[RMDB]
RNA sequence: GGGAACGACUCGAGUAGAGUCGAAAAUAGCCUGGUAGGCAGCAUUCAGUCCUCCUAUGUCUUCUUUCUCCUGUUGUGGUUUUUCUUCUGAAACAAAAGAAGAAAUUGUCAAAUCAGACUUGCCCUCCUAACAUUACCACUUCGGUGGUAAUGUUAGAAAAGAAACAACAACAACAAC
Reactivity to DMS in 0.01 (KOAc 150mM, MgCl2 10mM, bicine 150mM(pH8.5), 24C), signal-to-noise 2, nucleotides 027 to 126: u000a100g020c020c030u000g010g000u010a120g000g020c030a090g020c050a080u000u000c070a120g030u000c020c000u010c020c030u000a050u000g010u000c010u000u010c040u000u000u010c070u000c030c020u000g010u000u000g020u000g010g020u000u000u000u000u000c010u000u000c000u000g010a070a090a130c220a080a080a140a030g010a040a010g000a030a020a060u000u000g010u000c030a040a090a090u000c060a060g000a030c050u000u000g000c020c010c000u000c080

Chemical mapping of a 177-nucleotide RNA with DMS.
DMS adducts were read by reverse transcription with MarathonRT.
Source: RMDB library RFMREP, as collected in RNAgym.
Conditions: 150 mM KOAc, 10 mM MgCl2 and 150 mM bicine (pH 8.5), 24 C.